Chemical mapping of a 207-nucleotide RNA with DMS and 2A3. The DMS profile rests on 3,950 reads. The reactions ran in a buffer of 150 mM KOAc, 10 mM MgCl2 and 150 mM bicine (pH 8.5), at 24 C. DMS (dimethyl sulfate) methylates the pairing face of unpaired adenines and cytosines. Values cover nucleotides 27 to 156. DMS adducts were read by reverse transcription with MarathonRT. The 2A3 profile rests on 1,795 reads.
RNA sequence: GGGAACGACUCGAGUAGAGUCGAAAAAAUGCCGCCUCAGUUCCAAGCUCUUGCGUGGCACUGUAAACAGUCCUAUUGAGUUAGGGGCAGUCAACCACGUUGCGAAGCUAAAUUAUCUGGUCGAGAGUUACGAUUCCCUACUUCGGUAGGGAAUCAACUGGUCUAUCUAGUUCGCUAGAUAGACCAGAAAAGAAACAACAACAACAAC
Reactivity to DMS in 0.01 (KOAc 150mM, MgCl2 10mM, bicine 150mM(pH8.5), 24C), signal-to-noise 2, nucleotides 027 to 156: a050a050u000g010c000c030g030c030c020u020c050a070g010u010u000c010c010a150a300g020c000u000c020u000u000g010c000g010u000g020g030c060a020c020u000g030u000a040a090a060c070a150g010u000c010c010u000a010u010u000g010a300g010u000u010a030g020g030g000g000c020a020g030u000c020a070a020c040c000a010c030g010u000u000g010c060g010a070a090g030c060u000a050a030a060u020u000a050u010c050u000g020g010u000c030g000a110g000a080g020u000u000a050c080g000a050u010u010c010c000c000u000a010c010u000u010c260g050g010u000a020g000g010g010a000a000u000c000a000a150
Reactivity to 2A3 in 0.01 (KOAc 150mM, MgCl2 10mM, bicine 150mM(pH8.5), 24C), signal-to-noise 3, nucleotides 027 to 156: a000a010u100g040c030c010g070c030c000u040c030a040g010u070u090c040c040a060a010g000c000u040c040u140u080g000c010g010u000g000g040c070a010c020u000g030u090a030a150a090c060a070g130u080c000c000u040a060u040u110g170a180g300u030u020a050g010g000g020g000c010a000g010u010c010a020a050c010c010a000c020g010u030u040g040c080g080a100a010g020c020u060a040a080a140u180u130a090u060c040u040g040g030u050c040g030a010g000a010g200u040u070a070c050g000a010u000u000c000c000c000u000a000c020u010u060c200g040g000u010a010g020g000g000a000a000u000c000a000a000